[RMDB]
RNA sequence: GGGAACGACUCGAGUAGAGUCGAAAAGUCCGUCGUACGCGACGGACAACGAGUCUCGGUGACGAGACUCGAACAACGGCUACGGCCGUUGAACGGCAGUUCGUGAGAACUGCCGAACGAACACGUGAGUGUUCGAGGACCUAACUACGGUUAGGUCCAACCAACAAUGUGAUCUUGCUUGCGGAGGCAAAAUUUGCACAGUAUAAAAUCUGCAAGUAGUGCUAUUGUUGGAAACUGUGCUAACCGAUGGCGUACGCGCCAUCGGAACUCCGAUGUUCGCAUCGGAGAAAAGAAACAACAACAACAAC
Reactivity to 2A3 in 0.01 (KOAc 150mM, MgCl2 10mM, bicine 150mM(pH8.5), 24C), signal-to-noise 6, nucleotides 027 to 266: g000u010c010c000g000u010c010g020u030a030c300g000c020g140a010c000g000g000a000c000a010a030c010g000a000g000u000c000u000c000g000g050u070g030a030c010g000a000g000a000c000u000c000g000a020a000c000a000a000c000g010g010c000u050a070c280g180g000c000c000g000u010u010g030a170a030c010g000g000c000a000g000u000u000c010g030u070g070a080g010a030a000c000u000g000c000c000g000a020a020c010g000a000a000c000a000c010g090u110g130a090g020u000g010u000u000c000g000a100g000g000a000c000c000u000a000a000c010u030a040c300g130g010u000u000a000g000g000u000c000c000a000a010c000c000a000a000c000a010a010u150g140u030g300a190u150c050u120u100g010c000u000u000g000c010g000g030a020g060g050c070a060a070a060a170u040u050u020g000c000a010c000a000g020u030a030u050a300a110a040a130u010c000u010g000c000a000a000g000u040a050g110u060g050c000u010a000u010u000g000u000u000g010g000a030a000a000c010u010g000u010g000c030u050a080a070c000c000g010a010u000g010g000c000g030u060a060c300g050c010g000c110c000a000u000c000g000g000a000a010
Reactivity to DMS in 0.01 (KOAc 150mM, MgCl2 10mM, bicine 150mM(pH8.5), 24C), signal-to-noise 2, nucleotides 027 to 266: g000u000c000c000g010u000c020g060u020a120c200g010c010g020a000c000g010g000a010c000a000a040c020g000a000g000u000c010u000c000g000g000u010g010a140c010g000a010g000a020c000u010c010g050a220a220c030a030a000c000g010g020c020u000a090c190g020g000c010c000g000u000u000g000a080a230c060g000g010c000a010g010u000u010c000g000u060g000a220g000a050a000c000u010g050c000c010g000a020a110c030g000a010a020c000a000c000g000u010g000a190g030u000g000u010u010c000g020a170g000g010a020c000c010u000a010a000c000u000a120c190g040g010u000u000a020g000g000u000c000c000a040a030c000c010a000a010c010a000a000u000g000u000g000a300u000c160u020u000g010c000u000u000g010c010g000g010a050g030g000c190a090a020a130a140u010u030u020g000c010a010c000a000g010u000a090u030a100a100a220a070u000c000u000g010c000a010a000g010u000a020g010u000g040c000u000a000u000u000g000u010u000g010g000a090a080a020c010u000g030u000g000c020u000a120a140c020c020g000a070u000g000g000c000g040u000a080c100g020c000g010c050c000a030u000c030g010g000a050a060